[RMDB]
RNA sequence: GGGAACGACUCGAGUAGAGUCGAAAAAUCCAGUACAUUUCACCACAUUGUCUGCAGCUCACCUCGCAGGAAUCACUUCGGUGAGCGAGGGCUGUUCGACUCCACGCGGAAAUGUCGAAGGAUGAUGGGCAGUAGGUAGUUUCGACUACCUACUGCCAAAAGAAACAACAACAACAAC
Reactivity to DMS in 0.01 (KOAc 150mM, MgCl2 10mM, bicine 150mM(pH8.5), 24C), signal-to-noise 2, nucleotides 027 to 126: a030u020c010c000a120g000u120a080c000a010u000u000u010c020a080c040c050a110c180a130u030u000g020u000c040u010g000c040a010g050c040u030c140a300c040c000u000c000g000c000a160g000g020a070a250u010c090a020c130u000u000c080g000g000u000g000a030g060c100g020a050g000g020g020c020u000g070u000u030c300g010a010c000u000c220c110a070c240g000c140g010g040a000a000a010u000g000u000c010g010a240a140g000g000a050u000g010a110u000g000
Reactivity to 2A3 in 0.01 (KOAc 150mM, MgCl2 10mM, bicine 150mM(pH8.5), 24C), signal-to-noise 4, nucleotides 027 to 126: a000u010c000c000a010g060u110a000c010a010u020u000u040c140a150c090c010a080c060a140u050u100g000u000c000u010g000c000a000g000c020u090c130a150c020c000u010c000g000c020a040g120g200a040a090u030c020a000c040u060u070c120g120g000u000g000a000g000c010g010a010g000g010g000c000u000g020u010u040c050g000a000c000u010c010c060a140c120g040c140g010g010a010a000a010u020g010u010c010g030a140a040g030g020a010u070g030a080u180g010